RNA sequence: GGGAACGACUCGAGUAGAGUCGAAAAGGGAGUUUCGAAUUCCUGCAGCUCGGUCUGUCCGGAGAGAAGUGAUCAAGCCCCGGCUGUCGAGAGGCUCAGGGAGCCUUUACGUUUUUUCGCUUUUACCAUAAUGCCUGUUUUUCGAAACAGGCAUUAUAAAAGAAACAACAACAACAAC
Reactivity to 2A3 in 0.01 (KOAc 150mM, MgCl2 10mM, bicine 150mM(pH8.5), 24C), signal-to-noise 3, nucleotides 027 to 126: g040g030g020a070g010u030u020u100c050g020a030a060u080u010c000c000u000g030c030a000g000c000u030c060g030g060u080c030u050g080u070c000c020g060g000a080g000a030g020a270a040g170u140g110a190u110c040a040a070g010c000c000c010c000g010g040c040u080g010u010c010g010a010g020a020g050g000c000u040c150a010g060g060g050a040g010c000c010u030u060u040a060c080g000u040u020u000u000u010u100c050g030c040u040u040u010u020a060c020c000
Reactivity to DMS in 0.01 (KOAc 150mM, MgCl2 10mM, bicine 150mM(pH8.5), 24C), signal-to-noise 4, nucleotides 027 to 126: g000g000g020a110g010u000u010u010c020g000a080a150u010u000c000c010u020g010c060a060g000c020u000c070g000g000u020c020u020g010u040c010c020g000g010a080g010a100g010a070a090g020u020g020a090u020c110a120a160g010c040c020c020c020g000g010c030u000g010u000c020g010a050g010a040g000g000c020u000c050a130g010g000g000a030g000c060c040u010u010u010a060c090g000u000u010u000u000u000u010c030g010c070u000u010u000u010a130c150c080
Overview: An RNA of 177 nucleotides, treated with 2A3 and DMS and read out base by base. Source: RMDB libraries RFM100 and RFMREP, as collected in RNAgym. For 2A3, 1,328 sequencing reads were counted. 2A3 adducts were read by reverse transcription with SuperScript II with manganese. The RNA was probed in 150 mM KOAc, 10 mM MgCl2 and 150 mM bicine (pH 8.5) at 24 C. Reactivities are given for positions 27 through 126.